[RMDB]
RNA sequence: GGGAACGACUCGAGUAGAGUCGAAAAUAUCAAAAAUUGCCACAUGAGGGAUAUUUGGUAAUAACUUACGGAAAGCACGAAUACCCAUCAAGUUAGCUGGGUUGUGAAGCGGUGCUAAUUCGCUUAAUGUAUGAAAUAGUUUCGACUAUUUCAUACAAAAAGAAACAACAACAACAAC
Reactivity to 2A3 in 0.01 (KOAc 150mM, MgCl2 10mM, bicine 150mM(pH8.5), 24C), signal-to-noise 4, nucleotides 027 to 126: u040a000u000c020a000a030a060a040a120u080u110g160c010c000a100c060a180u150g090a220g060g070g010a010u030a050u060u040u010g000g020u000a030a050u060a090a080c050u060u180a030c030g060g050a110a050a000g000c000a000c020g030a070a000u030a070c010c020c000a010u030c020a080a160g240u200u140a020g000c040u020g000g000g000u030u050g050u040g070a100a030g250c100g040g010u000g010c000u020a030a130u060u050c030g020c050u020u080a070a010
Reactivity to DMS in 0.01 (KOAc 150mM, MgCl2 10mM, bicine 150mM(pH8.5), 24C), signal-to-noise 7, nucleotides 027 to 126: u000a040u010c030a030a030a050a110a110u000u000g020c010c010a080c210a110u000g010a130g010g000g000a030u000a080u000u000u000g010g010u000a020a060u000a090a120c110u000u000a100c080g000g010a040a130a050g000c020a020c020g010a120a070u000a060c010c000c000a040u000c040a080a120g020u010u000a090g010c110u000g000g000g010u000u000g010u010g010a090a080g010c130g010g010u000g010c030u000a050a080u000u000c040g020c080u000u010a030a200